[RMDB]
RNA sequence: GGGAACGACUCGAGUAGAGUCGAAAAAACCAACCGGGUGUUCUCCACUCCAGACGGUGGGCAACCAUCGUCGUGAGACGCCCAGCGAAUGAAUGACAGUAAAACCAAUGCCUUCACUGGCAGUAACACCCAGCAGUGUUGACUCAAUUCAUUCCGUCAAUUACGCUGAGUUCGCUCAGCGUAAUUGAAAAGAAACAACAACAACAAC
Reactivity to 2A3 in 0.01 (KOAc 150mM, MgCl2 10mM, bicine 150mM(pH8.5), 24C), signal-to-noise 2, nucleotides 027 to 156: a020a000c030c010a030a010c110c050g000g010g000u000g040u120u000c010u020c050c050a100c060u110c090c020a050g000a010c010g000g000u000g000g010g000c050a090a080c000c000a000u000c000g000u000c020g020u120g000a000g000a010c010g000c000c000c000a000g020c050g000a000a010u030g000a020a040u020g020a040c040a070g080u080a050a060a060a040c050c010a100a120u060g000c010c000u110u140c120a150c300u020g030g000c020a000g010u020a040a010c010a020c030c080c100a020g050c060a030g020u000g030u080u040g040a020c010u000c030a010a060u000u000c000a010u010u000c010c000g000u000